[RMDB]
This 207-nucleotide RNA was probed chemically with 2A3. For 2A3 the reverse transcriptase was SuperScript II with manganese. Conditions: 150 mM KOAc, 10 mM MgCl2 and 150 mM bicine (pH 8.5), 24 C.
RNA sequence: GGGAACGACUCGAGUAGAGUCGAAAAGCUGAGAGGCUCGCUUAGGUAACUAACGGGCUCCAUCCUCUCCCGGAACCACUGGUCCUUUUGCGUUCUGUGGGGUUGACAGUCCUCCCGGGGUAACCCGAUGCCUUCCUUCUGCUUCAGACGACAGGCGAUGACUACGGAAUUUCGAUUCCGUAGUCAUAAAAGAAACAACAACAACAAC
Reactivity to 2A3 in 0.01 (KOAc 150mM, MgCl2 10mM, bicine 150mM(pH8.5), 24C), signal-to-noise 1, nucleotides 027 to 156: g010c040u030g030a080g050a040g270g000c000u000c060g070c120u000u040a010g000g110u200a240a140c030u010a020a020c040g000g010g000c000u040c050c000a090u040c000c040u000c010u010c000c040c000g010g020a050a020c040c020a090c090u080g070g160u140c020c020u020u140u120u150g050c080g020u040u030c010u030g150u200g030g030g020g010u020u000g050a030c000a060g010u010c000c030u080c000c030c000g000g050g000g000u050a070a080c010c010c030g040a090u180g030c010c000u040u060c010c000u050u050c010u060g100c100u070u110c050a040g000a060c050g050a010c040a040g000g070c020g020
Source: RMDB library OK3TST, as collected in RNAgym.